RNA sequence: GGGAACGACUCGAGUAGAGUCGAAAAGCUGGAGAACGCCGACCUGUCGCUGCUAGGCAAGGCCCGCAAGGUCGUGGUCACCAAGGACGAGACCACCAUCGUCGAGGGCGCCGGUGACACCGACGCCUGGAUCGGGUAGUUUCGACUACCCGAUCCAAAAAGAAACAACAACAACAAC
Reactivity to 2A3 in 0.01 (KOAc 150mM, MgCl2 10mM, bicine 150mM(pH8.5), 24C), signal-to-noise 2, nucleotides 027 to 126: g020c010u020g000g050a090g000a110a030c050g050c050c010g050a090c020c010u020g050u090c010g040c050u040g020c020u070a040g100g000c030a060a080g090g000c040c050c020g020c060a090a110g000g000u040c030g030u040g010g000u040c030a030c060c020a120a030g130g020a030c030g000a010g050a020c000c050a010c000c020a090u080c030g110u020c050g060a110g040g000g000c020g010c010c000g000g030u070g040a040c050a020c110c000g000a020c010g000c000c050
Reactivity to DMS in 0.01 (KOAc 150mM, MgCl2 10mM, bicine 150mM(pH8.5), 24C), signal-to-noise 2, nucleotides 027 to 126: g010c050u000g010g030a130g030a080a030c070g000c050c040g010a110c010c000u000g000u000c080g020c010u020g010c050u000a080g050g020c080a110a070g010g000c000c050c020g000c120a030a030g000g000u010c050g000u000g000g000u000c000a080c060c030a060a250g000g010a040c040g020a050g010a050c090c050a090c010c050a080u000c030g050u030c110g020a070g000g000g000c000g000c010c000g000g010u020g000a100c080a300c010c000g000a000c000g010c000c040